[RMDB]
RNA sequence: GGGAACGACUCGAGUAGAGUCGAAAAGAUAUGGACGUGUGUGCUAGAUUCUCUUCGGAAACGAAGAGGGAGAUCUUGGACCACAACGUCCUAAGUCAAAUCCGUAGGUUGUUCGCAACCUACGGAACAGAAACUUAGACUUCGGUCUAAGUUUCUGAAAAGAAACAACAACAACAAC
Reactivity to 2A3 in 0.01 (KOAc 150mM, MgCl2 10mM, bicine 150mM(pH8.5), 24C), signal-to-noise 2, nucleotides 027 to 126: g000a020u010a000u040g000g000a000c010g030u230g050u000g000u010g110c010u010a020g000a000u300u080c000u000c000u000u010c000g000g020a010a000a010c000g010a010a000g000a010g040g020g030a300g000a000u000c000u160u300g020g000a020c000c020a010c000a010a020c000g000u000c000c000u000a020a000g000u010c020a120a060a200u010c000c000g010u000a010g010g010u020u010g020u050u120c300g000c210a010a000c000c000u000a000c000g000g010a010a000
Reactivity to DMS in 0.01 (KOAc 150mM, MgCl2 10mM, bicine 150mM(pH8.5), 24C), signal-to-noise 3, nucleotides 027 to 126: g010a010u000a070u030g000g010a000c000g020u000g020u010g000u000g000c010u000a000g020a010u000u000c000u000c000u020u010c010g020g000a020a030a030c000g000a010a020g000a010g020g010g030a300g000a000u000c000u010u000g000g010a020c300c010a000c000a020a020c000g000u010c000c000u000a000a070g000u000c020a120a080a140u000c000c000g010u000a010g000g010u000u000g010u000u010c270g000c010a010a010c000c000u000a000c000g010g000a010a040

This 177-nucleotide RNA was probed chemically with 2A3 and DMS. Values cover nucleotides 27 to 126. For 2A3, 5,889 sequencing reads were counted. Source: RMDB library TTRDES, as collected in RNAgym. For DMS, 3,211 sequencing reads were counted. For DMS the reverse transcriptase was MarathonRT.